[RMDB]
RNA sequence: GGGAACGACUCGAGUAGAGUCGAAAACUCUCUGAACUGGUCCAAUCCGGAUCCUGUCAGUCGGAGCUGGUGAGGAUGAGAAAGCCGUAGCAUAGACUGACUACGCACGUAGUGGUCUCGUAGGACCUAUUCUCGGACGCGGGUUCGAUUCCCGCCGGUUAGUAAUGUUGUUCGCAACAUUACUAACAAAAGAAACAACAACAACAAC
Reactivity to DMS in 0.01 (KOAc 150mM, MgCl2 10mM, bicine 150mM(pH8.5), 24C), signal-to-noise 3, nucleotides 027 to 156: c040u000c000u000c020u010g010a100a090c050u000g010g000u000c020c030a080a280u010c050c010g010g000a020u000c010c030u010g000u010c030a050g010u000c080g020g040a280g030c010u010g020g030u010g000a300g030g000a160u000g010a100g030a110a100a130g000c040c020g000u000a060g040c070a120u000a130g010a090c030u000g000a060c000u000a030c040g010c110a130c120g030u000a100g020u000g010g010u000c010u000c070g040u010a210g000g010a070c030c000u010a040u000u000c010u000c040g000g010a100c070g000c010g010g020g020u000u000c040g010a300u000u010c000c000c000g020c040c040g010
Reactivity to 2A3 in 0.01 (KOAc 150mM, MgCl2 10mM, bicine 150mM(pH8.5), 24C), signal-to-noise 7, nucleotides 027 to 156: c020u020c010u000c050u070g050a070a020c060u090g020g010u000c020c010a050a080u060c070c090g020g010a020u020c010c020u040g030u030c010a020g020u020c020g070g120a030g000c030u030g020g040u060g020a040g100g000a100u130g030a060g080a060a050a010g030c050c080g230u300a020g000c040a020u040a100g010a020c010u030g050a010c000u020a020c040g100c070a070c140g020u040a030g040u080g070g000u030c060u030c100g100u090a090g030g020a000c000c000u020a070u050u010c050u010c030g040g010a040c030g000c010g020g000g000u040u080c020g020a060u040u010c000c000c000g000c000c000g050